[RMDB]
The record gives the reactivity of an RNA of 177 nucleotides to DMS and 2A3. The data come from the RNA Mapping Database (RMDB), library OK2TST. The DMS profile rests on 12,741 reads. Conditions: 150 mM KOAc, 10 mM MgCl2 and 150 mM bicine (pH 8.5), 24 C. The 2A3 profile rests on 11,246 reads. 2A3 adducts were read by reverse transcription with SuperScript II with manganese.
RNA sequence: GGGAACGACUCGAGUAGAGUCGAAAAGAAUUCGGCGAAAUGGUCGUUGCCGAAAUAAGACUGGCCAGCACCCGCGGCGACGAUCAGGCUGUCGUAGGGGGUUUGGUAGGUGUGACCGAGCAAUUCCGACCGGUAUUAUAUUCGUAUAAUACCGGUCAAAAGAAACAACAACAACAAC
Reactivity to DMS in 0.01 (KOAc 150mM, MgCl2 10mM, bicine 150mM(pH8.5), 24C), signal-to-noise 7, nucleotides 027 to 126: g000a100a160u000u000c020g010g000c020g010a070a100a090u000g010g000u000c030g010u000u010g000c000c010g000a030a040a070u010a090a110g010a070c040u010g010g000c020c010a080g010c040a080c020c010c010g010c030g010g000c010g010a010c010g000a070u000c140a070g000g000c060u010g020u000c010g030u000a100g020g000g000g000g020u000u000u000g020g000u000a080g010g000u010g010u000g010a090c070c020g000a100g010c120a080a150u010u000c090c080
Reactivity to 2A3 in 0.01 (KOAc 150mM, MgCl2 10mM, bicine 150mM(pH8.5), 24C), signal-to-noise 6, nucleotides 027 to 126: g140a040a180u080u020c010g020g000c020g020a030a020a090u080g020g010u030c020g010u020u020g040c010c000g020a040a050a020u160a050a020g070a040c050u060g060g000c020c010a010g000c020a040c000c010c020g010c000g010g010c010g000a010c010g010a060u160c060a030g070g000c050u060g010u030c010g010u240a290g020g020g010g020g000u090u190u080g030g000u040a060g020g030u060g050u070g030a040c030c020g010a040g000c020a030a190u200u040c040c030